This 177-nucleotide RNA was probed chemically with DMS and 2A3. Source: RMDB library OK2TRN, as collected in RNAgym. The 2A3 profile rests on 860 reads. The DMS profile rests on 1,046 reads. Reactivities are given for positions 27 through 126.
RNA sequence: GGGAACGACUCGAGUAGAGUCGAAAACAGAUACCAUGCAUGCGCUGGAUGCGCAACUACAACAUCAGGACAUGCCUAAUGGCGAGUGCGGACAUCAUUGCUGGGCUGACAGUGGGAGUAAUGGCGGCGGUUUAGGCAUGUUCGCAUGCCUAAACCGAAAAGAAACAACAACAACAAC
Reactivity to DMS in 0.01 (KOAc 150mM, MgCl2 10mM, bicine 150mM(pH8.5), 24C), signal-to-noise 1, nucleotides 027 to 126: c130a050g020a140u000a070c070c020a060u040g010c080a100u000g020c040g000c100u000g010g000a100u020g030c020g000c040a040a040c160u010a090c070a080a050c070a060u000c030a080g010g000a060c080a040u000g000c040c080u010a100a080u000g020g020c030g010a050g020u000g040c020g070g000a090c040a040u000c060a130u000u000g000c030u000g010g020g000c040u000g000a060c090a060g000u000g030g000g000a080g000u020a060a060u000g000g000c070g000g020
Reactivity to 2A3 in 0.01 (KOAc 150mM, MgCl2 10mM, bicine 150mM(pH8.5), 24C), signal-to-noise 1, nucleotides 027 to 126: c040a000g080a120u200a120c020c010a020u110g020c010a040u020g000c090g040c050u110g180g080a080u050g000c060g000c010a060a020c010u110a010c010a220a010c000a030u060c010a060g010g010a040c000a020u020g070c010c010u240a300a090u210g040g000c020g000a030g000u070g050c000g070g000a030c010a070u060c010a000u000u150g030c040u070g010g060g000c020u090g010a000c010a010g040u090g120g030g000a070g020u110a160a160u130g030g010c000g020g000